Description: Structure probing data (DMS and 2A3) for a 177-nucleotide construct. Values are in units of 0.01, from 0 to 300, in steps of 10. For DMS the reverse transcriptase was MarathonRT. It was measured as part of the RMDB library RFM100. For 2A3, 391 sequencing reads were counted.
RNA sequence: GGGAACGACUCGAGUAGAGUCGAAAAAGGGCAAAAGUUGGCCUGACUGUAUUUCGAUCAGCAAGAAAUUCAGAGGCGAAAGCCGGGCCUAGCGAACCUCAGAGUCCUCCUUGAUGGGGGCCUGAGACAGGCCAAUUUCGUUCGCGAAAUUGGCCUGAAAAGAAACAACAACAACAAC
Reactivity to DMS in 0.01 (KOAc 150mM, MgCl2 10mM, bicine 150mM(pH8.5), 24C), signal-to-noise 1, nucleotides 027 to 126: a130g070g000g010c070a120a130a160a130g020u000u020g000g050c000c000u060g000a120c020u000g000u040a000u000u030u000c050g000a220u010c180a080g020c160a070a170g000a000a040a040u000u000c000a060g070a300g000g000c000g000a160a000a090g020c040c000g000g030g110c000c020u000a020g000c060g000a020a010c300c000u000c030a000g050a210g020u020c000c000u010c000c000u070u000g010a080u060g000g000g000g000g000c000c000u010g050a000g000a080
Reactivity to 2A3 in 0.01 (KOAc 150mM, MgCl2 10mM, bicine 150mM(pH8.5), 24C), signal-to-noise 1, nucleotides 027 to 126: a000g060g000g000c030a090a010a000a000g000u050u020g130g000c000c000u030g050a070c000u000g020u030a020u000u000u000c090g020a130u120c050a060g130c060a200a040g020a060a000a000u050u140c000a010g010a000g000g000c020g130a070a010a000g000c000c000g040g040g000c000c000u000a000g030c000g040a000a030c000c000u080c060a000g000a000g110u160c000c000u000c000c020u240u220g110a300u240g010g000g000g000g000c000c000u000g000a000g020a090